Annotation: The record gives the reactivity of an RNA of 177 nucleotides to DMS and 2A3. For DMS the reverse transcriptase was MarathonRT. The data come from the RNA Mapping Database (RMDB), library OK1LIB.

[RMDB]
RNA sequence: GGGAACGACUCGAGUAGAGUCGAAAAACAUAACAAUAUGAACUUUAUAAUUUUGAUAUUGUCGGUAAAGUGAAAUUUGUGGCACAUUGAUAUUAUGGAUAACAUUUGUAAAAUGAAAAUGAUGAUACGCAGUAUUUUACUUCGGUAAAAUACUGCGAAAAGAAACAACAACAACAAC
Reactivity to DMS in 0.01 (KOAc 150mM, MgCl2 10mM, bicine 150mM(pH8.5), 24C), signal-to-noise 1, nucleotides 027 to 126: a090c040a080u030a200a220c040a010a010u040a000u030g010a110a110c120u000u010u010a030u070a030a080u010u030u000u030g000a080u040a040u010u000g020u000c010g030g010u030a000a050a050g000u000g000a010a080a090u000u000u000g040u010g000g010c030a050c270a020u010u010g000a030u000a030u000u000a000u000g000g000a050u020a010a240c040a110u000u020u000g010u000a060a040a160a070u020g000a070a030a030a140u030g000a040u000g000a110u000a140
Reactivity to 2A3 in 0.01 (KOAc 150mM, MgCl2 10mM, bicine 150mM(pH8.5), 24C), signal-to-noise 1, nucleotides 027 to 126: a000c000a010u070a010a050c030a000a080u130a090u170g000a020a030c030u020u000u090a020u060a120a140u010u130u000u080g000a000u000a000u160u070g010u010c000g000g110u120a170a000a000g060u000g180a050a150a170u110u040u000g110u020g000g000c080a000c010a010u070u070g000a000u000a050u130u000a000u070g080g000a000u070a130a000c020a030u060u010u030g050u060a140a090a000a000u070g170a020a080a000a000u220g110a000u140g040a000u060a100